The record gives the reactivity of an RNA of 207 nucleotides to DMS and 2A3. For 2A3 the reverse transcriptase was SuperScript II with manganese. Conditions: 150 mM KOAc, 10 mM MgCl2 and 150 mM bicine (pH 8.5), 24 C. DMS adducts were read by reverse transcription with MarathonRT. The DMS profile rests on 2,770 reads.

[RMDB]
RNA sequence: GGGAACGACUCGAGUAGAGUCGAAAAUGACACUUCGGUGUCAAAAAAUCCUAAGUCUACAGUCUGAGGUCUACUGGAGGAAAUCGGAAACGAUUUCCGUUGAAAGUAGACUACCCACCAGAAUGUAGAUAUGGAAAAAAAGUCGAUUCGUCGACAACACUACUAGACAGUUCGCUGUCUAGUAGUGAAAAGAAACAACAACAACAAC
Reactivity to DMS in 0.01 (KOAc 150mM, MgCl2 10mM, bicine 150mM(pH8.5), 24C), signal-to-noise 2, nucleotides 027 to 156: u000g000a030c000a000c020u000u000c250g050g080u010g000u000c000a020a040a160a070a020a110u000c010c000u000a060a180g010u000c020u010a010c000a040g000u000c020u000g010a140g000g010u010c000u000a010c000u020g000g020a210g030g020a020a010a010u000c000g010g000a110a150a250c010g010a040u000u000u000c000c010g050u000u000g020a140a190a080g020u000a000g010a020c020u010a000c030c020c010a300c070c010a020g000a010a020u010g000u010a020g000a020u000a300u000g010g010a000a000a020a150a040a070a140g000u000c010g010a090u000u000c130g020u000c000g020a110c090a070a120
Reactivity to 2A3 in 0.01 (KOAc 150mM, MgCl2 10mM, bicine 150mM(pH8.5), 24C), signal-to-noise 3, nucleotides 027 to 156: u060g000a000c010a000c020u080u130c300g120g000u010g010u010c030a140a040a000a000a000a050u060c040c000u060a110a030g030u000c010u000a000c000a010g010u000c000u010g010a010g020g000u000c000u000a000c000u010g020g010a020g000g000a000a000a000u000c000g030g030a070a040a030c010g000a000u000u010u000c000c000g000u030u030g000a000a000a000g000u000a000g000a000c000u000a000c010c000c000a080c000c000a010g000a030a030u010g000u000a000g000a000u010a040u020g000g070a040a030a020a020a060a000a080g000u030c010g020a030u150u090c180g040u000c000g140a000c000a030a030